[RMDB]
RNA sequence: GGGAACGACUCGAGUAGAGUCGAAAACUGGGCUAUAUAAGACUGAAGAACAUAUAACUAGUGGUUCUAAUUUUUUCCUUAUAAAAUCACAUGUUCAUAAUGGCCAAGAGUCGAGUUCUUCAAGGAGAAAUCAUAAAACGUUCGCGUUUUAUGAUUUAAAAGAAACAACAACAACAAC
Reactivity to DMS in 0.01 (KOAc 150mM, MgCl2 10mM, bicine 150mM(pH8.5), 24C), signal-to-noise 2, nucleotides 027 to 126: c040u000g030g000g010c020u000a060u010a100u020a100a110g000a090c120u000g020a170a180g000a020a020c030a060u010a090u010a130a090c130u020a220g010u000g030g000u000u000c030u040a050a050u020u000u000u000u000u010c020c000u010u010a050u000a070a070a020a010u000c010a010c020a100u000g010u000u000c050a050u000a060a090u000g000g020c010c010a080a110g000a040g030u010c020g000a130g000u000u000c000u000u010c140a040a030g010g000a050g000